[RMDB]
RNA sequence: GGGAACGACUCGAGUAGAGUCGAAAAUGCUCUGAGUUGAACAUGAUCUCAAAAAGUAUACCAGGUGCACAAUCGAAUGGUAACUCCUUGAGAACAAACUCGUUAUUGGCCAUAGGUUCAGCCGGAAAGUCUACCACCGAUUCGUCGGUGGUAGACUAAAAGAAACAACAACAACAAC
Reactivity to DMS in 0.01 (KOAc 150mM, MgCl2 10mM, bicine 150mM(pH8.5), 24C), signal-to-noise 1, nucleotides 027 to 126: u020g000c090u010c070u020g020a050g000u010u000g000a070a180c110a070u000g000a130u000c010u010c000a000a000a110a040a020g010u000a100u000a020c010c000a050g010g000u020g010c240a160c290a070a110u000c110g000a100a070u000g000g000u010a000a070c010u000c090c040u000u000g000a070g020a050a100c040a060a140a110c000u040c080g020u000u000a080u000u020g010g000c090c120a050u000a020g000g000u010u000c040a080g100c060c030g000g020a050a010
Reactivity to 2A3 in 0.01 (KOAc 150mM, MgCl2 10mM, bicine 150mM(pH8.5), 24C), signal-to-noise 1, nucleotides 027 to 126: u100g010c010u000c030u100g050a020g070u050u050g020a040a000c040a080u100g060a120u000c010u000c000a010a000a010a010a010g130u110a100u020a300c010c000a010g020g080u200g090c050a100c100a120a090u220c080g100a150a120u030g010g040u030a020a020c010u030c010c040u020u020g030a020g030a020a010c000a010a050a000c030u030c090g050u040u050a160u090u120g060g000c020c010a030u030a110g000g140u070u010c030a000g040c000c030g080g000a160a030